[RMDB]
RNA sequence: GGGAACGACUCGAGUAGAGUCGAAAAUAGGUUGAAUUCGUUCAACCUACAGGCAAGCAAGCAGCGCAACGAGACAAGGCGAUAUUAAGAUAGCGCAUGCUGAUACAUCGGUCUUCGGACCGAUGAAUUAGGUGAAAAGUUUCGACUUUUCACCUAAAAAAGAAACAACAACAACAAC
Reactivity to 2A3 in 0.01 (KOAc 150mM, MgCl2 10mM, bicine 150mM(pH8.5), 24C), signal-to-noise 3, nucleotides 027 to 126: u060a000g000g000u000u010g020a020a000u090u100c150g040u110u030c010a000a000c000c000u000a030c010a020g110g050c040a040a050g000c010a010a020g000c010a020g000c020g000c040a010a070c070g040a010g040a070c070a080a030g090g030c020g070a040u010a090u180u200a120a030g060a180u110a050g030c020g000c020a050u060g030c010u010g030a020u020a140c000a000u000c000g000g010u010c000u020u050c170g060g000a000c010c010g000a000u000g000a000a030
Reactivity to DMS in 0.01 (KOAc 150mM, MgCl2 10mM, bicine 150mM(pH8.5), 24C), signal-to-noise 5, nucleotides 027 to 126: u000a000g000g010u000u010g010a020a040u000u020c180g030u000u000c000a000a010c000c010u000a020c100a090g010g000c060a090a100g000c090a120a070g010c020a030g020c040g010c030a080a100c120g000a090g010a080c130a030a090g000g010c050g000a060u000a060u010u000a070a110g010a090u000a080g020c020g010c040a090u010g010c030u000g000a120u010a140c010a010u000c000g010g000u000c000u000u000c190g030g010a010c000c010g010a000u000g000a050a050
This 177-nucleotide RNA was probed chemically with 2A3 and DMS. The reactions ran in a buffer of 150 mM KOAc, 10 mM MgCl2 and 150 mM bicine (pH 8.5), at 24 C.